RNA sequence: GGGAACGACUCGAGUAGAGUCGAAAAACCAUGCUGUAAAGCCACAUUGUGACAACUUUUUUUUUUAAUAGGUGUGACUUUUGUUCCAAUAAUGAAGAGUCCUUUAUCCUGGAUGCUGACAGCAACAUGGGAAACAGAAUUGAGAGCAUCACUCAGACUGACUAAUGCUGUUCGCAGCAUUAGUCAGAAAAGAAACAACAACAACAAC
Reactivity to 2A3 in 0.01 (KOAc 150mM, MgCl2 10mM, bicine 150mM(pH8.5), 24C), signal-to-noise 2, nucleotides 027 to 156: a000c000c000a010u030g000c000u040g050u100a000a040a130g040c000c000a050c050a100u090u080g040u100g090a000c020a040a060c090u080u060u070u080u090u050u140u150u050u140a170a220u160a090g070g000u060g010u020g020a060c000u020u030u020u090g040u070u100c030c010a100a050u140a110a010u210g050a080a040g020a010g090u070c040c030u160u140u110a160u090c000c010u020g030g000a010u070g000c000u000g050a020c020a010g040c000a030a010c010a060u120g000g010g000a020a150a000c040a080g090a080a120u110u100g020a110g000a000g000c080a050u110c070a020c070u020c030a020g000a090

Chemical mapping of a 207-nucleotide RNA with 2A3.
Conditions: 150 mM KOAc, 10 mM MgCl2 and 150 mM bicine (pH 8.5), 24 C.